[RMDB]
RNA sequence: GGGAACGACUCGAGUAGAGUCGAAAAGAUAUGGAAGCGAAAGACGAUGAGACUCACUCGGAAACGAGUGGAGUCGAGUCUAGCUUCCUAAGUCAAAAGUAAGAGGGGGCUUCGGCCCCCUCUUACACUAACGAACACAGUUCGCUGUGUUCGUUAGAAAAGAAACAACAACAACAAC
Reactivity to DMS in 0.01 (KOAc 150mM, MgCl2 10mM, bicine 150mM(pH8.5), 24C), signal-to-noise 3, nucleotides 027 to 126: g010a020u000a050u010g000g000a020a000g000c010g010a130a300a120g000a000c010g020a250u010g000a300g000a010c000u000c000a030c000u010c000g020g010a020a010a040c000g000a020g010u000g030g020a010g020u010c000g020a010g010u000c000u000a300g000c000u000u000c000c000u000a000a080g000u000c010a070a100a180a100g000u000a000a000g010a030g020g030g020g020g000c000u000u010c300g050g030c000c010c000c000c000u000c000u000u000a000c000a200